[RMDB]
RNA sequence: GGGAACGACUCGAGUAGAGUCGAAAAACUCUGUGGCAGUGUUUGGGAACUACACUUUCACCAAUAGCUUGGUGUCAGAAGAAAGUGUGUUGUCACUCCUUACCACUGAAGGCGGAAGGGCAACUCACCACUAGGUGCCUUUCGAGGCACCUAGUGGAAAAGAAACAACAACAACAAC
Reactivity to DMS in 0.01 (KOAc 150mM, MgCl2 10mM, bicine 150mM(pH8.5), 24C), signal-to-noise 1, nucleotides 027 to 126: a090c040u000c040u020g010u000g000g000c120a050g030u010g000u000u000u010g020g010g010a030a040c020u000a020c020a050c010u010u000u000c000a050c010c000a040a070u020a180g020c300u000u010g000g010u010g010u000c240a090g000a100a130g000a100a070a010g000u000g010u000g000u000u000g020u020c060a050c050u000c020c040u000u020a110c010c000a060c080u000g000a120a110g020g000c190g040g000a030a020g000g000g020c050a030a100c070u010c090a140